[RMDB]
RNA sequence: GGGAACGACUCGAGUAGAGUCGAAAAUACCGCAGGCCUGCGGUGCGGCAGUGUGGAGACCUGCCGUAAGCCGUGUUGUUUUGACAACCGGGAGAAAGCGUAUGCGGCGGCAGCGCUUUCAGGGUCUAAAAGUAUGGGAUCUUCGGAUCCCAUACAAUCCUAAAAUAACGUUCGCGUUAUUUUAGGAAAAAGAAACAACAACAACAAC
Reactivity to DMS in 0.01 (KOAc 150mM, MgCl2 10mM, bicine 150mM(pH8.5), 24C), signal-to-noise 1, nucleotides 027 to 156: u010a090c000c010g000c060a060g040g000c010c020u000g000c000g000g050u000g010c010g030g040c000a060g030u000g000u000g020g050a300g000a080c250c010u020g020c010c010g020u000a010a080g050c000c020g010u010g040u000u000g020u000u000u000u000g020a060c000a000a030c000c010g020g000g010a070g000a040a020a000g010c000g030u000a070u000g000c000g030g030c210g020g020c030a130g000c020g020c010u000u000u000c000a010g020g000g010u010c020u000a080a090a090a180g000u000a020u000g000g010g020a020u000c000u010u020c300g010g000a000u000c000c000c000a000u010a000c020a070a060
Reactivity to 2A3 in 0.01 (KOAc 150mM, MgCl2 10mM, bicine 150mM(pH8.5), 24C), signal-to-noise 3, nucleotides 027 to 156: u080a010c000c000g000c000a010g000g010c010c020u020g000c000g000g000u000g000c000g000g000c000a010g010u040g010u120g260g050a060g040a040c000c010u010g000c000c000g000u000a010a000g010c010c010g120u140g010u140u000g010u010u120u070u290g080a020c000a010a000c000c010g010g020g000a010g000a000a010a000g000c000g010u040a300u260g000c060g110g000c030g100g010c050a000g010c000g000c000u010u000u000c000a000g000g010g000u000c000u010a000a070a030a070g000u000a000u000g000g000g000a000u000c000u010u000c060g110g000a000u010c010c000c000a000u000a000c000a000a000